[RMDB]
RNA sequence: GGGAACGACUCGAGUAGAGUCGAAAAGAUUGUCAUGAUGCGGAUCUAGUUGUCAUCUGUGCUGGUGCUGCACAAAAACCUGGAGAAACACGUUUAGAUUUAGUAUCUAAAAACUUGAAAAUAUUCACCAAAGACAGGUAUUCGUACCUGUCUUUGGAAAAGAAACAACAACAACAAC
Reactivity to 2A3 in 0.01 (KOAc 150mM, MgCl2 10mM, bicine 150mM(pH8.5), 24C), signal-to-noise 5, nucleotides 027 to 126: g090a110u160u220g050u120c090a080u120g070a060u070g030c000g020g020a070u050c040u050a040g050u120u060g090u110c010a060u010c060u030g040u020g010c020u030g010g050u060g010c040u030g000c030a000c020a060a060a040a010a010c010c020u060g050g000a040g060a050a080a000c070a000c100g010u010u040u080a030g010a060u050u040u060a130g050u090a020u000c010u040a010a010a010a010a090c030u050u090g040a000a110a000a030u240a160u080u140c050a030
Reactivity to DMS in 0.01 (KOAc 150mM, MgCl2 10mM, bicine 150mM(pH8.5), 24C), signal-to-noise 3, nucleotides 027 to 126: g010a040u010u020g030u000c030a080u000g010a070u010g010c030g000g020a090u010c050u010a030g020u000u010g000u000c090a030u000c050u010g020u010g010c010u000g000g020u000g030c000u000g020c040a090c100a010a040a030a060a030c030c050u020g000g030a020g030a150a090a050c100a040c170g010u020u000u020a000g000a010u000u010u020a110g010u020a030u000c020u000a030a040a070a060a090c130u010u020g000a050a070a020a100u040a110u030u020c060a140